[RMDB]
RNA sequence: GGGAACGACUCGAGUAGAGUCGAAAAGCAACAUAGAACGUUCUAUUAACGAACACGCGCGGAUCGUCGGUGGUCGGCGAGCCCACGGACGUACUUGAUCGCGCGAACGAGUAAAAAUCGCCGGCAAUCAUGUAAGUUACUUCGGUAACUUACAUGAAAAAGAAACAACAACAACAAC
Reactivity to DMS in 0.01 (KOAc 150mM, MgCl2 10mM, bicine 150mM(pH8.5), 24C), signal-to-noise 6, nucleotides 027 to 126: g000c060a080a060c100a100u010a070g000a110a140c110g010u000u000c010u000a300u010u010a110a120c170g000a060a050c060a280c030g000c000g000c010g010g000a060u000c000g020u000c010g000g030u000g000g000u000c010g010g000c020g020a020g010c220c000c000a010c010g010g010a020c010g020u010a050c180u010u000g010a110u000c010g010c020g000c000g000a030a030c100g010a130g000u000a030a030a020a040a030u000c000g000c010c000g010g010c220a080a130
Reactivity to 2A3 in 0.01 (KOAc 150mM, MgCl2 10mM, bicine 150mM(pH8.5), 24C), signal-to-noise 7, nucleotides 027 to 126: g030c010a000a080c020a090u190a090g130a140a040c060g010u020u000c020u050a270u210u200a140a050c100g010a010a000c040a020c050g000c000g000c000g060g050a090u060c000g030u010c060g140g010u010g000g010u030c020g000g000c010g010a060g120c010c000c000a000c010g100g000a000c010g010u050a040c040u070u220g090a100u300c000g000c000g000c000g010a020a010c020g020a010g060u150a010a080a030a000a010u010c010g000c010c000g010g060c050a010a070

The record gives the reactivity of an RNA of 177 nucleotides to DMS and 2A3.
The reactions ran in a buffer of 150 mM KOAc, 10 mM MgCl2 and 150 mM bicine (pH 8.5), at 24 C.
DMS adducts were read by reverse transcription with MarathonRT.
It was measured as part of the RMDB library M2PK90.
The DMS profile rests on 6,983 reads.